[RMDB]
RNA sequence: GGGAACGACUCGAGUAGAGUCGAAAACGCCCGUUUCGACGGGCGGAAGAGGGGUCAUGCGUUUGACGGACAUGAGAAUGUACUGAAGCCUCCACGGUACAUUUCUCAACAGCCCGAGCAUGACGGAGGCACCCGGGGCGAACCGUUCGCGGUUCAACAACUCCUAAGGAUUCGUCCUUAGGAGUUGAAAAGAAACAACAACAACAAC
Reactivity to 2A3 in 0.01 (KOAc 150mM, MgCl2 10mM, bicine 150mM(pH8.5), 24C), signal-to-noise 5, nucleotides 027 to 156: c010g000c000c030c000g010u030u070u100c250g110a050c010g000g000g010c090g040g000a070a020g080a100g020g080g040g000u000c000a010u010g010c030g120u140u210u260g200a130c080g010g010a030c050a090u090g000a000g000a000a010u000g000u000a000c000u010g020a070a020g010c000c000u010c000c000a010c010g020g000u010a000c000a010u100u220u060c010u000c020a140a300c110a060g010c000c000c000g000a010g000c000a000u010g000a000c000g000g000a000g000g000c000a010c000c000c000g000g000g010g020c110g010a010a010c010c010g010u050u060c250g000c030g100g000u000u010c000a010a020
Reactivity to DMS in 0.01 (KOAc 150mM, MgCl2 10mM, bicine 150mM(pH8.5), 24C), signal-to-noise 2, nucleotides 027 to 156: c030g010c000c060c020g050u010u000u000c190g020a050c040g030g000g050c030g000g000a030a070g010a140g010g010g000g010u000c010a020u000g000c020g010u010u000u000g020a180c030g010g020a020c020a290u000g020a020g010a040a040u010g020u000a000c010u000g010a030a150g010c000c010u000c020c020a300c060g000g000u000a000c000a030u010u000u000c010u000c000a090a050c200a160g000c000c010c010g020a130g000c000a020u000g000a020c020g020g020a020g060g020c030a110c020c020c010g030g000g020g010c090g000a030a040c010c010g020u000u010c180g040c050g010g000u000u000c000a060a280
The record gives the reactivity of an RNA of 207 nucleotides to 2A3 and DMS. For DMS, 5,735 sequencing reads were counted. Reactivities are given for positions 27 through 156. For 2A3, 5,372 sequencing reads were counted.